[RMDB]
An RNA of 177 nucleotides, treated with DMS and 2A3 and read out base by base. The DMS profile rests on 1,117 reads. The data come from the RNA Mapping Database (RMDB), library TTRDEL. For 2A3 the reverse transcriptase was SuperScript II with manganese. The RNA was probed in 150 mM KOAc, 10 mM MgCl2 and 150 mM bicine (pH 8.5) at 24 C.
RNA sequence: GGGAACGACUCGAGUAGAGUCGAAAAGAUAUGGACAGAGCGAAGAACAUACGGGAUCGGAAACGAUCUUAUGGGAGCUCGUCCUAAGUCAAACCACGCACGAUCCGUUCGCGGAUCGUGCGUGGAACCAAAAUUACACGUUCGCGUGUAAUUUUGGAAAAGAAACAACAACAACAAC
Reactivity to DMS in 0.01 (KOAc 150mM, MgCl2 10mM, bicine 150mM(pH8.5), 24C), signal-to-noise 2, nucleotides 027 to 126: g040a010u000a300u000g020g000a010c010a110g010a010g060c000g000a160a130g000a140a100c000a010u000a050c300g000g010g000a010u000c000g000g000a140a130a260c000g000a010u000c000u000u010a020u000g000g000g000a160g030c000u000c000g020u000c010c000u020a020a090g010u000c020a070a140a210c000c000a030c000g010c000a000c000g010a030u000c000c000g020u000u010c250g000c000g050g010a000u000c000g030u000g000c000g010u000g000g000a010a080
Reactivity to 2A3 in 0.01 (KOAc 150mM, MgCl2 10mM, bicine 150mM(pH8.5), 24C), signal-to-noise 1, nucleotides 027 to 126: g000a010u080a040u120g010g020a040c180a230g010a130g030c030g130a300a050g000a240a040c040a030u140a190c240g110g000g000a010u020c010g010g030a020a050a040c040g000a000u000c000u050u020a030u020g000g000g040a020g000c000u010c010g000u010c010c000u020a220a010g010u010c050a070a050a060c020c010a010c000g000c010a000c020g000a010u010c020c020g120u100u100c240g000c030g150g030a020u000c010g000u000g000c050g020u000g000g020a000a000